Description: The record gives the reactivity of an RNA of 207 nucleotides to 2A3. The RNA was probed in 150 mM KOAc, 10 mM MgCl2 and 150 mM bicine (pH 8.5) at 24 C.
RNA sequence: GGGAACGACUCGAGUAGAGUCGAAAAGUAGGCUUCGGCCUACACACAGCGUACUACCUGUAGAGGUCCACCGAAGUGCUCCUCCCAAAUAGGAGGAGUCACUAUAGACAGUGGACUACCCACCUACAGGUAUCGCCCAAUCGAGAUUCGUCUCGAAGGUGUUGCCUUAUUUCGAUAAGGCAACACCAAAAGAAACAACAACAACAAC
Reactivity to 2A3 in 0.01 (KOAc 150mM, MgCl2 10mM, bicine 150mM(pH8.5), 24C), signal-to-noise 1, nucleotides 027 to 156: g000u000a000g010g020c020u040u090c300g070g000c010c000u000a010c000a000c000a000c000a000g010c020g030u080a110c040u000a000c040c020u090g000u020a000g000a000g000g020u010c000c000a010c020c000g130a030a010g000u000g010c000u000c050c000u130c040c010c050a250a290a090u300a090g030g000a000g020g000a000g040u050c000a000c010u000a020u020a020g110a040c040a010g000u000g000g020a000c000u010a020c000c040c000a070c010c010u000a000c020a000g040g030u000a000u030c000g000c000c000c000a030a130u030c010g000a000g010a040u000u110c120g050u000c090u010c000g000a040a100
The data come from the RNA Mapping Database (RMDB), library RNAMAK.